An RNA of 177 nucleotides, treated with DMS and 2A3 and read out base by base. For 2A3, 4,891 sequencing reads were counted.

[RMDB]
RNA sequence: GGGAACGACUCGAGUAGAGUCGAAAAUAUAUAUAGAUCGUUCUAUUAACGAACACGCGCGGGUCGUCGGUGGUCGGCGAGCCCACGGACGUACUUACUCGCGCGAACGAGUAAAAAUCGCCAGGAAACAUCACAUUAUCUUCGGAUAAUGUGAUGUAAAAGAAACAACAACAACAAC
Reactivity to DMS in 0.01 (KOAc 150mM, MgCl2 10mM, bicine 150mM(pH8.5), 24C), signal-to-noise 4, nucleotides 027 to 126: u010a060u000a150u020a130u000a090g000a100u000c030g000u000u010c040u010a190u010u010a070a100c130g010a080a100c090a120c100g010c010g010c000g010g000g000u000c010g010u000c010g000g070u000g000g010u000c030g010g010c020g000a040g010c300c000c000a010c000g000g010a010c010g000u000a060c160u020u010a170c010u000c010g010c010g000c040g000a020a020c050g010a060g010u010a010a040a020a030a050u000c010g010c020c020a250g000g000a110a090
Reactivity to 2A3 in 0.01 (KOAc 150mM, MgCl2 10mM, bicine 150mM(pH8.5), 24C), signal-to-noise 3, nucleotides 027 to 126: u080a000u000a000u000a010u050a070g060a100u070c020g030u030u000c050u030a220u160u150a140a050c060g020a030a010c050a020c090g000c000g000c000g010g000g010u070c000g000u000c080g130g030u000g000g010u020c030g000g020c030g010a000g020c010c000c000a000c000g060g000a000c000g010u020a020c010u090u100a040c000u010c010g030c000g010c010g000a000a000c010g000a000g030u130a020a100a020a020a040u010c020g000c010c010a060g110g090a060a250

Reactivities are given for positions 27 through 126.
Conditions: 150 mM KOAc, 10 mM MgCl2 and 150 mM bicine (pH 8.5), 24 C.